RNA sequence: GGGAACGACUCGAGUAGAGUCGAAAAGCCGCAGCACCCCGGCAUUAACUUCCGCGCCAUGUCACACCUCUUCCAGAUGGCACAGGACAGCAGCGGGGCUCGGGACACGCGCAUAGCGAUGAGCAUCCUCCUCCUUCCUAUUCGUAGGAAGGAGGAGAAAAGAAACAACAACAACAAC
Reactivity to DMS in 0.01 (KOAc 150mM, MgCl2 10mM, bicine 150mM(pH8.5), 24C), signal-to-noise 2, nucleotides 027 to 126: g040c040c040g050c150a110g000c060a270c050c000c030c000g010g010c040a080u020u010a120a120c190u000u010c000c020g010c060g000c090c040a080u010g000u010c010a040c130a110c040c030u010c010u010u010c150c100a170g000a060u020g010g020c040a100c090a010g000g010a070c030a040g020c090a080g020c100g000g020g000g000c040u000c020g000g000g000a050c050a060c110g010c000g000c130a070u000a150g020c020g010a170u020g000a120g000c040a170u040c040
Reactivity to 2A3 in 0.01 (KOAc 150mM, MgCl2 10mM, bicine 150mM(pH8.5), 24C), signal-to-noise 1, nucleotides 027 to 126: g020c000c030g000c080a040g020c020a030c010c000c080c010g010g120c050a030u100u230a070a140c050u150u060c030c010g000c010g020c070c040a090u070g020u060c010a020c000a020c060c010u090c100u270u120c040c040a030g010a100u160g030g040c080a040c050a070g090g000a020c030a020g030c020a010g040c050g010g020g020g010c020u040c020g000g000g010a030c050a020c110g080c000g010c040a080u150a030g060c010g050a080u100g060a060g000c000a020u080c010